[RMDB]
The record gives the reactivity of an RNA of 177 nucleotides to 2A3 and DMS.
Values are in units of 0.01, from 0 to 300, in steps of 10.
The RNA was probed in 150 mM KOAc, 10 mM MgCl2 and 150 mM bicine (pH 8.5) at 24 C.
2A3 adducts were read by reverse transcription with SuperScript II with manganese.
The DMS profile rests on 935 reads.
Values cover nucleotides 27 to 126.
RNA sequence: GGGAACGACUCGAGUAGAGUCGAAAAACGAGCGGGAGGCCUUCACGGGCUGCACCGCUGGCCGACCCUGAUCUUCUGUGAAGGGUUCGAGUUGGAGCACGCCUGUCGGGACCCGAAAGAUGGUGAAGAACAUUUACACGUUCGCGUGUAAAUGUUCAAAAGAAACAACAACAACAAC
Reactivity to 2A3 in 0.01 (KOAc 150mM, MgCl2 10mM, bicine 150mM(pH8.5), 24C), signal-to-noise 1, nucleotides 027 to 126: a020c100g010a050g070c010g010g000g000a040g030g170c010c000u040u050c070a050c050g020g010g000c000u020g040c000a010c040c000g000c010u010g000g030c030c050g010a000c010c010c020u010g000a010u010c160u300u110c220u300g140u000g010a010a010g020g030g000u050u100c010g020a010g000u050u300g060g010a020g040c020a010c080g020c000c000u050g030u110c040g010g000g040a010c030c040c020g020a020a020a000g060a040u160g040g070u080g080a110a030
Reactivity to DMS in 0.01 (KOAc 150mM, MgCl2 10mM, bicine 150mM(pH8.5), 24C), signal-to-noise 1, nucleotides 027 to 126: a100c060g000a120g020c030g000g000g020a260g020g010c000c000u000u000c200a080c140g020g010g040c000u000g030c040a250c010c010g000c010u000g010g000c270c040g000a070c000c000c000u000g000a220u010c020u000u020c240u020g000u020g010a260a040g000g000g000u000u000c020g010a090g010u010u000g060g000a080g030c030a000c180g020c000c010u010g000u010c100g000g010g000a150c010c020c010g000a060a100a070g000a060u000g000g010u000g000a190a150